An RNA of 177 nucleotides, treated with DMS and 2A3 and read out base by base. The RNA was probed in 150 mM KOAc, 10 mM MgCl2 and 150 mM bicine (pH 8.5) at 24 C. For DMS the reverse transcriptase was MarathonRT. For 2A3, 782 sequencing reads were counted. For 2A3 the reverse transcriptase was SuperScript II with manganese. Source: RMDB library RFMREP, as collected in RNAgym.
RNA sequence: GGGAACGACUCGAGUAGAGUCGAAAAAGGAACGGGGGUGAUGCCUCUUGGUUAUAGAAGGUUUUACUCCUAGAAAGGAAUAGCCGUGUCUGUGUAUGAAGCACUGACGUUUGCGGUGGUAUUUGCCGAAUUGGAGGUAGUUCGCUACCUCCAAUUCAAAAGAAACAACAACAACAAC
Reactivity to DMS in 0.01 (KOAc 150mM, MgCl2 10mM, bicine 150mM(pH8.5), 24C), signal-to-noise 2, nucleotides 027 to 126: a130g010g010a110a070c200g000g000g000g000g030u010g020a020u000g010c010c000u010c030u010u000g020g010u010u010a050u010a060g010a030a030g020g000u010u000u000u000a020c020u000c000c000u000a090g020a040a080a060g010g000a050a030u000a170g000c000c010g010u000g010u000c020u000g010u010g000u000a130u010g010a170a200g010c000a010c020u000g000a010c010g040u010u020u030g020c020g010g000u010g010g010u000a070u000u000u000g000c090c050
Reactivity to 2A3 in 0.01 (KOAc 150mM, MgCl2 10mM, bicine 150mM(pH8.5), 24C), signal-to-noise 1, nucleotides 027 to 126: a000g100g020a100a020c030g000g020g010g000g000u000g000a000u010g010c010c000u030c000u010u050g150g000u180u050a060u050a260g130a120a070g020g010u030u020u060u040a030c000u000c000c000u030a030g170a070a100a000g090g000a030a020u010a020g020c010c000g120u100g030u050c030u010g000u000g000u010a100u280g240a220a010g040c000a000c040u050g010a000c010g010u120u250u280g000c060g000g000u000g010g010u030a130u030u050u120g130c030c030